[RMDB]
RNA sequence: GGGAACGACUCGAGUAGAGUCGAAAAAUGCCAUAGUGAUGAUCACUGUAAUUUCAUGGGAAAGAUACAGGAAACCCAACAAUAACAGCAAUAAUUCAGCAGCCUAGCAGAUGCCAGAUCUCAUUUGUGCUUCACCCUUAGCAUGACUGAUGAUACAUAAAUAGGCAGUGUUCGCACUGCCUAUUUAAAAAGAAACAACAACAACAAC
Reactivity to DMS in 0.01 (KOAc 150mM, MgCl2 10mM, bicine 150mM(pH8.5), 24C), signal-to-noise 3, nucleotides 027 to 156: a110u010g000c030c010a140u000a070g030u020g030a070u000g010a090u000c070a120c040u010g010u000a090a130u010u010u010c040a180u000g000g000g000a070a080a080g010a240u000a120c040a070g010g000a110a090a120c020c010c000a090a180c070a100a100u010a130a060c060a100g000c040a090a080u010a060a150u000u000c030a060g000c020a070g000c100c040u010a090g010c050a090g010a070u000g020c060c030a090g000a040u000c020u000c040a080u000u010u010g000u000g000c010u010u010c050a080c040c060c030u000u000a020g040c010a060u000g020a050c070u000g000a080u000g020a100u000a050c090a200
Reactivity to 2A3 in 0.01 (KOAc 150mM, MgCl2 10mM, bicine 150mM(pH8.5), 24C), signal-to-noise 3, nucleotides 027 to 156: a000u070g010c020c010a050u100a050g060u010g080a080u020g010a000u120c030a010c070u010g040u050a070a100u040u110u090c100a100u200g030g000g090a040a060a010g050a040u110a130c020a030g050g040a030a080a070c030c030c010a010a020c050a080a060u140a070a030c030a020g070c030a030a100u090a160a100u160u100c020a020g000c010a000g020c010c010u050a030g000c010a010g040a090u070g030c010c000a020g000a110u000c020u030c050a010u000u060u110g030u010g000c000u030u060c040a140c010c020c000u010u030a010g000c020a010u050g020a050c030u010g040a050u130g000a020u180a090c040a020